RNA sequence: GGGAACGACUCGAGUAGAGUCGAAAACGUCCACAACUCUGGGGAAGCUGAGCGCCAUCUUCGACGAGGCGCCGCGGAAACGCUGCUUUUCUGGCGGUAAAGCGUCAACGUCGUCGACGAAGCACCGCGCACGGCGCGUAUUCGUACGCGCCGUGCGAAAAGAAACAACAACAACAAC
Reactivity to 2A3 in 0.01 (KOAc 150mM, MgCl2 10mM, bicine 150mM(pH8.5), 24C), signal-to-noise 2, nucleotides 027 to 126: c030g170u060c000c010a060c040a130a120c020u070c050u090g060g000g000g020a130a000g040c070u090g100a130g010c020g010c030c000a120u070c050u080u000c020g150a140c030g070a090g030g120c020g010c000c000g000c010g010g000a000a070a050c060g070c080u070g000c000u040u000u110u090c060u140g050g010c050g040g020u100a120a110a000g030c000g000u080c050a130a050c020g080u030c010g060u050c020g030a030c020g020a030a000g030c030a020c090c010g000